[RMDB]
RNA sequence: GGGAACGACUCGAGUAGAGUCGAAAAGAUAUGGAAGUCCUGUGGAGAUCGAAGGUCGGAAACGAUGUUGACGAUCUAUGAAGCAGAGACUUCCUAAGUCAAAGUGGGCACGUUCGCGUGCCCACAACUGCAAUUACUAGUUCGCUAGUAAUUGCAGAAAAGAAACAACAACAACAAC
Reactivity to 2A3 in 0.01 (KOAc 150mM, MgCl2 10mM, bicine 150mM(pH8.5), 24C), signal-to-noise 1, nucleotides 027 to 126: g000a010u040a020u140g020g010a000a000g000u000c000c010u030g000u020g030g100a090g020a010u000c030g060a060a030g140g020u000c000g010g010a020a010a000c010g030a020u050g160u300u100g190a150c060g000a000u010c010u050a300u100g030a000a000g020c000a000g070a160g010a090c000u000u020c000c000u010a020a000g000u020c040a000a060a180g000u000g050g000g000c000a050c000g040u170u300c300g000c000g190u000g000c000c000c030a020c000a010a000
Reactivity to DMS in 0.01 (KOAc 150mM, MgCl2 10mM, bicine 150mM(pH8.5), 24C), signal-to-noise 2, nucleotides 027 to 126: g000a020u000a230u010g000g010a050a020g010u000c020c020u000g030u000g010g000a030g040a000u000c010g010a260a040g020g000u010c020g010g000a040a050a090c000g000a000u000g000u000u000g010a300c050g010a010u000c000u000a240u010g000a110a210g000c000a020g000a120g020a030c000u000u000c000c000u000a010a040g000u000c010a060a120a110g030u010g000g000g000c030a040c000g000u020u030c270g020c020g030u020g000c000c000c000a000c000a000a160